This 177-nucleotide RNA was probed chemically with DMS.

[RMDB]
RNA sequence: GGGAACGACUCGAGUAGAGUCGAAAAAGAGUCGAUGCGUACGCGCAUCGACUCAAGGUCAUUUUCAUGACCGCGCAUCUCCAGUCAGGGCAGGCCGUUCCCAUACGGUCUUGCCCUUUUUUCUGAAAAGGAUGAUAUCAUUCGUGAUAUCAUCCUUAAAAGAAACAACAACAACAAC
Reactivity to DMS in 0.01 (KOAc 150mM, MgCl2 10mM, bicine 150mM(pH8.5), 24C), signal-to-noise 6, nucleotides 027 to 126: a080g000a020g020u000c010g030a000u000g020c000g040u010a110c280g040c000g010c000a000u000c000g000a000c010u010c000a010a030g000g020u010c010a010u000u020u040u010c230a040u000g000a010c000c000g010c240g020c180a120u020c050u030c010c110a140g010u040c240a020g010g000g000c010a020g000g000c000c000g010u000u010c190c150c120a110u040a030c000g000g010u000c000u010u010g000c000c000c010u000u000u000u000u000u010c010u000g000a100a080

The RNA was probed in 150 mM KOAc, 10 mM MgCl2 and 150 mM bicine (pH 8.5) at 24 C.
For DMS the reverse transcriptase was MarathonRT.